[RMDB]
Chemical mapping of a 207-nucleotide RNA with 2A3.
For 2A3, 611 sequencing reads were counted.
Conditions: 150 mM KOAc, 10 mM MgCl2 and 150 mM bicine (pH 8.5), 24 C.
RNA sequence: GGGAACGACUCGAGUAGAGUCGAAAAUUGAUAAGACCGUAGUGGCCCGGUUAAUGACCAGGGGUAUGGUAACAACGGAAAGAGAUGUCACAAUGGGUGAUCCGCAGCCAAACACCCGACUUCGGAAGAAGAGGGUGCAGGUUCAGAGACUAAAUGGCACUUUUGUCAACUUCGGUUGACAAAAGUGAAAAGAAACAACAACAACAAC
Reactivity to 2A3 in 0.01 (KOAc 150mM, MgCl2 10mM, bicine 150mM(pH8.5), 24C), signal-to-noise 1, nucleotides 027 to 156: u060u040g000a010u030a180a110g050a050c040c000g010u040a030g050u050g080g040c000c000c050g000g000u100u060a140a130u140g100a090c010c030a080g010g000g000g000u140a120u130g030g000u030a070a050c030a010a000c050g090g040a070a090a000g020a000g000a030u070g020u080c010a000c030a080a110u110g090g000g000u060g010a030u000c000c000g000c050a000g000c000c010a090a090a000c000a010c020c000c030g080a220c020u000u000c000g020g050a060a070g000a010a000g000a080g000g000g000u000g020c050a040g030g000u050u010c060a010g040a000g020a030c030u190a090a070a100u090g030g110